[RMDB]
RNA sequence: GGGAACGACUCGAGUAGAGUCGAAAACAGUGGGUACUACACCUUUGAUGCUAAUUUGGCGAUUCUUAACUUAGAUUAUAUGCGCGAGUUACUGGGAUCGGAUCGCUCGAUUUUUUACACGAUUAAACUGCAACGUAAAGUUCGCUUUACGUUGCAGAAAAGAAACAACAACAACAAC
Reactivity to DMS in 0.01 (KOAc 150mM, MgCl2 10mM, bicine 150mM(pH8.5), 24C), signal-to-noise 2, nucleotides 027 to 126: c080a120g020u000g030g020g010u000a080c180u000a100c140a120c010c050u030u020u000g010a120u000g030c090u010a010a070u000u000u000g000g010c020g010a030u000u020c020u000u010a060a060c020u000u000a050g020a150u010u000a080u000a090u010g000c120g020c120g030a110g000u000u000a050c210u000g000g010g000a050u000c170g020g000a020u000c050g030c010u000c060g000a000u000u000u000u020u000u000a140c090a060c120g000a050u000u000a060a060a130
Reactivity to 2A3 in 0.01 (KOAc 150mM, MgCl2 10mM, bicine 150mM(pH8.5), 24C), signal-to-noise 2, nucleotides 027 to 126: c030a020g060u050g050g000g030u080a110c090u090a020c100a050c030c000u010u190u130g110a070u090g050c050u060a060a080u100u020u070g010g000c000g000a000u080u000c020u050u060a030a040c010u020u050a040g000a070u110u190a220u080a030u290g050c120g040c050g050a050g000u030u060a020c050u050g070g000g030a030u060c040g000g000a010u010c000g000c040u010c020g030a020u050u030u070u000u050u140a020c110a010c060g080a080u080u080a000a090a140
Annotation:
An RNA of 177 nucleotides, treated with DMS and 2A3 and read out base by base. For 2A3, 1,078 sequencing reads were counted. Conditions: 150 mM KOAc, 10 mM MgCl2 and 150 mM bicine (pH 8.5), 24 C. For 2A3 the reverse transcriptase was SuperScript II with manganese. The DMS profile rests on 1,030 reads. Reactivities are given for positions 27 through 126. It was measured as part of the RMDB library OK2TST.